Notes:
The record gives the reactivity of an RNA of 177 nucleotides to DMS and 2A3. The DMS profile rests on 11,250 reads. DMS adducts were read by reverse transcription with MarathonRT.

RNA sequence: GGGAACGACUCGAGUAGAGUCGAAAAUCUGUUUACAAGUUAUCGUUAAGUCCAUGUCUGACUACGAUUCCGUAAAGAGAAGCCAUUUUGCGUCAAGUCCGACAUGGACUCUUGGCAGAACUGAUCAACCCUUUUACUGAUUCGUCAGUAAAAGGGUAAAAGAAACAACAACAACAAC
Reactivity to DMS in 0.01 (KOAc 150mM, MgCl2 10mM, bicine 150mM(pH8.5), 24C), signal-to-noise 7, nucleotides 027 to 126: u000c020u000g010u000u000u010a090c060a060a030g000u010u010a080u010c210g020u010u000a080a040g010u000c000c010a010u000g000u000c020u000g010a010c000u000a060c070g000a080u000u000c090c030g020u000a050a070a100g000a150g000a100a110g020c110c100a110u000u000u010u000g010c020g000u000c110a100a030g000u000c000c090g000a010c030a020u000g000g000a010c010u000c020u000u000g000g010c050a070g010a020a090c080u000g010a110u000c140a110
Reactivity to 2A3 in 0.01 (KOAc 150mM, MgCl2 10mM, bicine 150mM(pH8.5), 24C), signal-to-noise 6, nucleotides 027 to 126: u020c000u010g040u050u110u130a080c030a040a020g030u090u070a210u240c090g070u110u210a100a020g000u000c000c000a000u010g000u000c010u010g010a000c000u040a050c080g070a070u100u030c060c020g040u070a040a080a010g130a020g030a120a020g060c040c030a070u030u030u030u070g030c010g010u030c060a040a020g000u000c000c010g000a000c020a010u010g000g000a000c010u000c000u000u000g010g000c010a010g000a080a040c040u060g030a100u100c050a030